[RMDB]
This 177-nucleotide RNA was probed chemically with DMS and 2A3. The RNA was probed in 150 mM KOAc, 10 mM MgCl2 and 150 mM bicine (pH 8.5) at 24 C. Reactivities are rounded to 0.1 and cut off at 0 and 3. The DMS profile rests on 5,977 reads. It was measured as part of the RMDB library OK1LIB. DMS adducts were read by reverse transcription with MarathonRT. For 2A3, 3,124 sequencing reads were counted.
RNA sequence: GGGAACGACUCGAGUAGAGUCGAAAAACUUUGAAUUCAGUGGCAUUACCAACGCGAAGUUUGGAUACGUGGAUGAGUGUGAAAAGUUACAACAAGUGUGGGGCUCGCCUAAGCAUGGAUGAUUCCGCAUCAUUGAUCCGUUCGCGGAUCAAUGAUGAAAAGAAACAACAACAACAAC
Reactivity to DMS in 0.01 (KOAc 150mM, MgCl2 10mM, bicine 150mM(pH8.5), 24C), signal-to-noise 3, nucleotides 027 to 126: a030c060u010u000u010g010a100a030u010u010c060a050g030u020g000g000c060a060u010u010a120c050c030a040a120c080g000c140g000a070a070g000u000u000u010g020g000a080u010a040c120g040u010g010g010a020u020g010a040g000u000g000u020g000a040a040a060a090g000u000u000a070c090a020a100c100a080a110g010u010g050u000g000g000g020g010c070u000c050g030c020c010u000a070a070g000c100a020u010g000g010a050u020g000a130u000u010c030c070g010
Reactivity to 2A3 in 0.01 (KOAc 150mM, MgCl2 10mM, bicine 150mM(pH8.5), 24C), signal-to-noise 5, nucleotides 027 to 126: a000c050u100u040u180g070a070a040u110u050c030a020g070u050g070g060c020a020u000u130a090c020c020a070a040c020g010c030g160a160a060g040u030u070u060g080g040a030u040a110c040g070u060g000g020a060u050g020a070g040u090g010u040g050a060a030a040a020g060u100u090a040c050a170a010c070a110a100g010u000g010u060g080g000g020g000c030u030c030g070c000c000u060a060a020g050c030a040u070g000g040a040u080g000a050u120u000c020c030g010